[RMDB]
RNA sequence: GGGAACGACUCGAGUAGAGUCGAAAACAAGGACCACCGAGUGCCAGCCUGGUUCCCUACGAGGGGCUCGCCCCGGGCAUCCUGCCGCCAUGGAGAGUGUGCUCGGUGGGCGGGAGACAGAUGUGGCAUUACAACUAGCUUUCGAGCUAGUUGUAAUAAAAGAAACAACAACAACAAC
Reactivity to 2A3 in 0.01 (KOAc 150mM, MgCl2 10mM, bicine 150mM(pH8.5), 24C), signal-to-noise 4, nucleotides 027 to 126: c020a040a070g110g030a030c010c000a010c040c030g030a030g010u030g010c010c020a040g030c060c020u030g030g000u060u070c010c000c000u020a070c110g080a110g000g020g010g010c050u060c050g050c020c010c000c020g000g000g010c000a030u030c000c010u050g060c020c030g060c050c040a110u170g010g020a070g000a020g040u160g010u010g030c000u000c000g040g000u040g010g000g000c020g000g030g020a070g030a030c050a020g080a060u170g050u090g090g030c020
Reactivity to DMS in 0.01 (KOAc 150mM, MgCl2 10mM, bicine 150mM(pH8.5), 24C), signal-to-noise 7, nucleotides 027 to 126: c100a120a130g010g000a160c030c030a040c040c020g000a060g010u010g010c010c020a160g020c030c000u000g010g000u000u000c000c010c010u010a100c200g010a140g000g010g000g010c070u010c160g010c020c030c010c020g000g000g010c010a080u000c100c020u000g010c030c040g010c090c110a080u010g010g000a070g010a100g020u000g020u000g000c010u000c000g010g030u000g010g000g020c030g010g010g000a100g010a090c080a050g010a080u000g020u010g000g000c080